Structure probing data (2A3 and DMS) for a 177-nucleotide construct. The reactions ran in a buffer of 150 mM KOAc, 10 mM MgCl2 and 150 mM bicine (pH 8.5), at 24 C. The data come from the RNA Mapping Database (RMDB), library OK1LIB.

[RMDB]
RNA sequence: GGGAACGACUCGAGUAGAGUCGAAAAGCUCUUAGAGACAGAUCGAACAACAAAGAGAGAUCGAAAAUCUUAGGGGAGAGAACGAAUCUGUCGUCUUCUCUAGGACAUUGUCGAUCAGAUGUCCAAAGGCCAGUCAUUGGUUCGCCAAUGAUUGGUCAAAAGAAACAACAACAACAAC
Reactivity to 2A3 in 0.01 (KOAc 150mM, MgCl2 10mM, bicine 150mM(pH8.5), 24C), signal-to-noise 9, nucleotides 027 to 126: g020c010u000c010u050u070a040g020a010g010a070c020a030g040a040u050c030g050a070a040c020a040a020c020a020a230a010g100a020g010a000g010a020u020c010g020a020a040a010a040u000c000u000u000a000g000g000g020g000a010g000a000g050a070a020c020g020a070a120u150c120u180g140u050c030g100u000c000u010u000c000u000c000u000a010g000g010a000c020a090u050u100g090u020c010g000a010u010c010a010g050a110u070g020u000c010c000a050a020a010
Reactivity to DMS in 0.01 (KOAc 150mM, MgCl2 10mM, bicine 150mM(pH8.5), 24C), signal-to-noise 9, nucleotides 027 to 126: g010c030u000c020u020u010a090g010a120g000a030c040a050g010a040u010c040g010a090a060c090a060a080c300a060a080a100g000a070g010a150g010a080u000c020g000a050a060a080a180u000c000u000u000a010g000g000g000g000a010g010a100g010a090a070c020g000a060a110u050c150u030g010u000c040g010u000c000u000u000c000u000c000u000a000g000g000a020c130a090u010u010g000u000c010g000a010u000c010a090g010a170u010g000u000c010c020a050a090a100